[RMDB]
RNA sequence: GGGAACGACUCGAGUAGAGUCGAAAACAAUUUAAAAAUAGAUUUGAUUGUUCUAGAUAUGGAGGUAAGGGACAACAAAAUUGCGGAUCUUAUAGAAGACAAUCUAGAGGAUCAGGGCUUGAGACUAGAAACUGAUAGGAUUCGUCCUAUCAGUUUCAAAAGAAACAACAACAACAAC
Reactivity to DMS in 0.01 (KOAc 150mM, MgCl2 10mM, bicine 150mM(pH8.5), 24C), signal-to-noise 3, nucleotides 027 to 126: c020a060a070u050u000u030a010a070a080a080a140u030a110g000a140u010u000u000g000a080u010u000g000u030u010c030u020a120g020a090u010a060u010g000g000a020g000g020u010a090a120g000g000g020a060c020a010a060c070a050a030a080a080u010u040g000c090g010g020a020u020c010u040u010a070u040a040g000a030a050g010a160c300a080a090u010c000u000a000g000a060g000g000a000u000c020a040g010g020g000c050u020u000g020a090g000a070c120u010a190
Reactivity to 2A3 in 0.01 (KOAc 150mM, MgCl2 10mM, bicine 150mM(pH8.5), 24C), signal-to-noise 6, nucleotides 027 to 126: c000a020a040u250u300u300a110a140a030a030a070u220a090g080a130u030u030u060g060a100u000u030g040u050u010c030u040a110g030a150u110a220u240g040g040a060g030g020u070a030a060g030g020g030a000c010a070a010c030a040a180a080a070u140u190g030c040g040g000a030u000c020u030u050a030u030a080g040a080a010g100a070c040a030a050u020c000u020a010g000a010g060g010a010u000c020a030g030g070g000c040u070u100g050a020g010a080c040u040a050